[RMDB]
RNA sequence: GGGAACGACUCGAGUAGAGUCGAAAACCUGGCGGCCCUGUACUCCAACCUGACGAAGCCCAUCUUGGACAUUGUUUUGUUCUCACAGAAACUCGCCAAGUCUGUGGGGGCACAGGGACCCCUGGCGUACAGUCAAGGAGUUCGCUCCUUGACUGUAAAAAGAAACAACAACAACAAC
Reactivity to DMS in 0.01 (KOAc 150mM, MgCl2 10mM, bicine 150mM(pH8.5), 24C), signal-to-noise 1, nucleotides 027 to 126: c010c000u000g050g040c150g000g000c020c010c010u010g000u000a060c070u000c050c110a140a070c070c030u010g010a000c040g000a080a080g040c030c050c010a100u000c130u010u000g030g010a030c040a110u000u030g010u000u000u010u000g000u000u010c010u000c010a000c010a020g000a000a020a020c020u010c050g000c010c010a300a210g000u010c000u000g030u010g000g000g000g000g010c020a040c020a040g020g000g000a180c000c010c040c010u010g030g000c000g020
Reactivity to 2A3 in 0.01 (KOAc 150mM, MgCl2 10mM, bicine 150mM(pH8.5), 24C), signal-to-noise 1, nucleotides 027 to 126: c010c010u020g000g000c110g030g000c050c000c010u020g000u030a040c050u030c120c060a070a070c000c090u050g060a050c010g090a130a010g020c020c060c020a140u070c150u100u140g020g010a050c000a110u120u110g180u110u230u070u130g020u000u060c010u010c000a000c000a000g020a050a040a010c010u010c000g000c020c000a000a010g010u070c000u000g010u010g010g030g010g000g000c050a020c010a060g000g050g100a180c020c020c040c030u040g010g000c040g000
Notes:
Chemical mapping of a 177-nucleotide RNA with DMS and 2A3. DMS adducts were read by reverse transcription with MarathonRT. The reactions ran in a buffer of 150 mM KOAc, 10 mM MgCl2 and 150 mM bicine (pH 8.5), at 24 C. Reactivities are given for positions 27 through 126. The DMS profile rests on 1,174 reads. Values are in units of 0.01, from 0 to 300, in steps of 10. The 2A3 profile rests on 905 reads.